[RMDB]
RNA sequence: GGGAACGACUCGAGUAGAGUCGAAAAUGCCUAAUGCCGUGGAACGAAGCCGAAGUGGUCUGGAACGGCCCGCCGUAGAGGGUGAUAGCCCCGUAGGCGUAAGUUCCACGGUUACAAGGCGGGGUAUUCUACUUGUCCCAUUCGUGGGACAAGUAGAAAAAGAAACAACAACAACAAC
Reactivity to DMS in 0.01 (KOAc 150mM, MgCl2 10mM, bicine 150mM(pH8.5), 24C), signal-to-noise 3, nucleotides 027 to 126: u040g020c010c000u000a150a250u000g000c010c000g030u040g020g000a010a010c000g010a100a300g020c000c010g000a010a050g000u000g010g000u010c000u030g000g000a300a060c090g000g000c000c010c000g050c000c030g060u070a000g020a300g000g000g000u000g010a130u000a040g010c000c000c000c010g010u000a300g000g010c010g000u020a100a300g000u000u040c000c000a000c030g000g000u010u000a020c120a160a040g000g000c000g000g000g000g000u060a140u000
An RNA of 177 nucleotides, treated with DMS and read out base by base. High DMS reactivity at an A or C suggests that its Watson-Crick edge is free. The data come from the RNA Mapping Database (RMDB), libraries RFM100 and RFMREP. The RNA was probed in 150 mM KOAc, 10 mM MgCl2 and 150 mM bicine (pH 8.5) at 24 C.